[RMDB]
RNA sequence: GGGAACGACUCGAGUAGAGUCGAAAACAUUUCACGCGGUAUGGUUACCACUGGUCAUUCUGCUGUUCCCAGUAUUAAGAAUGAGAGUGCUAUCAGUGUGAUAGAGGACAAGAAAAAGACGGUCGCCAUAGGAUAGCUGAUUCGUCAGCUAUCCUAUAAAAGAAACAACAACAACAAC
Reactivity to DMS in 0.01 (KOAc 150mM, MgCl2 10mM, bicine 150mM(pH8.5), 24C), signal-to-noise 7, nucleotides 027 to 126: c090a120u020u000u010c030a050c050g040c030g010g010u010a040u010g000g010u000u020a100c300c010a040c020u000g010g020u000c000a040u000u000c010u000g000c140u020g000u020u000c010c020c010a220g020u030a070u020u060a090a050g000a040a030u000g010a040g000a050g010u010g010c050u020a020u000c020a100g040u010g010u000g000a020u000a030g000a110g010g010a080c120a070a080g000a050a050a080a120a070g010a090c090g010g000u000c020g000c050c050
Reactivity to 2A3 in 0.01 (KOAc 150mM, MgCl2 10mM, bicine 150mM(pH8.5), 24C), signal-to-noise 7, nucleotides 027 to 126: c030a030u070u100u080c040a020c020g040c010g020g030u110a050u150g070g040u060u130a070c010c000a000c030u030g040g120u020c000a010u000u020c010u020g050c000u020g030u050u030c020c020c000a000g020u010a060u220u150a080a070g020a020a020u030g010a020g000a000g050u040g040c000u010a010u070c030a070g070u020g020u040g110a020u040a040g140a050g050g020a040c060a100a080g100a100a120a030a000a000g050a030c040g010g000u030c020g030c030c000
Structure probing data (DMS and 2A3) for a 177-nucleotide construct.
For DMS the reverse transcriptase was MarathonRT.
As a SHAPE reagent, 2A3 marks flexible, mostly unpaired nucleotides at the ribose 2'-OH.
Values cover nucleotides 27 to 126.
2A3 adducts were read by reverse transcription with SuperScript II with manganese.
The data come from the RNA Mapping Database (RMDB), library OK1LIB.
The RNA was probed in 150 mM KOAc, 10 mM MgCl2 and 150 mM bicine (pH 8.5) at 24 C.